Chemical mapping of a 177-nucleotide RNA with DMS and 2A3. Conditions: 150 mM KOAc, 10 mM MgCl2 and 150 mM bicine (pH 8.5), 24 C. The data come from the RNA Mapping Database (RMDB), library M2PK50. 2A3 adducts were read by reverse transcription with SuperScript II with manganese. High 2A3 reactivity points to a flexible backbone, as in loops and unpaired stretches.

[RMDB]
RNA sequence: GGGAACGACUCGAGUAGAGUCGAAAAGCACUGGCGUUCGCGCCAGUGCAAAGAACGCGACGGCCACCGAAAUAAAACGGUGAAGUACGCGACAAGCCGUAAAAACGUCGAACUUCGGUUCGACGAAGAUAAACAGCGAGUUCGCUCGCUGUUUAUCAAAAGAAACAACAACAACAAC
Reactivity to DMS in 0.01 (KOAc 150mM, MgCl2 10mM, bicine 150mM(pH8.5), 24C), signal-to-noise 2, nucleotides 027 to 126: g020c000a020c010u010g000g000c000g010u010u010c190g030c000g040c020c010a010g040u010g020c000a010a040a080g030a080a170c030g030c020g020a060c000g000g020c130c000a000c020c010g010a070a090a070u020a060a080a210a140c000g000g000u000g010a090a180g000u010a070c040g040c030g020a090c070a060a130g000c000c000g020u020a030a080a060a060a140c010g000u000c000g000a000a020c000u010u020c190g030g000u000u000c000g000a000c000g000a000a000
Reactivity to 2A3 in 0.01 (KOAc 150mM, MgCl2 10mM, bicine 150mM(pH8.5), 24C), signal-to-noise 2, nucleotides 027 to 126: g000c020a010c010u000g000g010c020g020u060u090c220g030c030g000c110c000a000g010u020g000c000a000a000a000g010a080a040c030g030c010g050a020c030g010g020c040c000a000c010c010g120a000a190a060u300a010a170a020a020c010g000g010u010g020a010a020g010u110a100c010g000c000g000a020c020a030a010g000c000c020g040u090a050a030a000a060a100c020g010u000c000g000a000a000c000u070u040c190g100g000u000u000c010g000a000c010g000a010a000